[RMDB]
RNA sequence: GGGAACGACUCGAGUAGAGUCGAAAAGGAGAAUGGCGUGAACCCGGGAGACAGAGCUUGCAGUGAGCCCGGAUUGCACCACUGCACUCCAGCCUGGGCGACAGAGUGAGACUCCAUCUCAAAAAAAAGGGUGAAUCUAAUUCGUUAGAUUCACCCUAAAAGAAACAACAACAACAAC
Reactivity to DMS in 0.01 (KOAc 150mM, MgCl2 10mM, bicine 150mM(pH8.5), 24C), signal-to-noise 1, nucleotides 027 to 126: g000g020a060g010a040a140u010g000g020c040g020u000g010a110a080c040c000c040g000g000g000a040g000a270c230a150g010a070g030c100u000u000g020c000a060g010u000g000a110g010c000c070c090g000g000a090u000u040g010c070a090c090c010a020c040u000g000c010a000c000u010c010c020a090g010c020c010u010g010g020g030c030g000a070c180a070g010a070g010u000g000a050g020a140c040u000c010c020a020u020c020u000c010a000a000a000a050a050a000a100